[RMDB]
RNA sequence: GGGAACGACUCGAGUAGAGUCGAAAAUGGCGGGUAUGAAGUCCGGUAGGUAGUCACGGUCGUUGUAGCUGGUUUUGUAUCCAGGCAGGGCGAGCAGACCGACUAGGGCGAUCGCGCAGGUGGCGACCAGGCUUGAUGUGUUCGCACAUCAAGCCUGAAAAGAAACAACAACAACAAC
Reactivity to 2A3 in 0.01 (KOAc 150mM, MgCl2 10mM, bicine 150mM(pH8.5), 24C), signal-to-noise 1, nucleotides 027 to 126: u150g070g010c060g010g080g000u020a070u110g070a040a000g010u030c010c010g030g000u030a030g000g110u040a070g030u040c080a040c120g000g010u060c010g030u000u030g140u030a000g010c000u020g000g020u120u000u120u060g010u000a130u120c000c000a010g020g150c020a000g010g010g020c040g040a000g000c010a030g030a110c000c000g030a020c090u070a080g030g020g000c040g040a010u000c010g060c000g010c040a010g000g010u000g000g000c010g000a030c020
Reactivity to DMS in 0.01 (KOAc 150mM, MgCl2 10mM, bicine 150mM(pH8.5), 24C), signal-to-noise 1, nucleotides 027 to 126: u060g010g060c000g000g000g000u000a070u030g000a000a120g020u000c000c130g000g000u020a010g060g000u020a040g000u000c030a050c230g050g000u000c020g000u000u000g050u010a040g010c010u020g040g020u000u090u000u100g010u000a170u000c050c000a100g030g040c030a140g010g010g000c010g000a150g080c040a030g000a080c000c000g030a060c060u000a090g040g000g000c000g030a040u000c040g000c130g000c110a040g010g050u030g010g000c000g020a080c150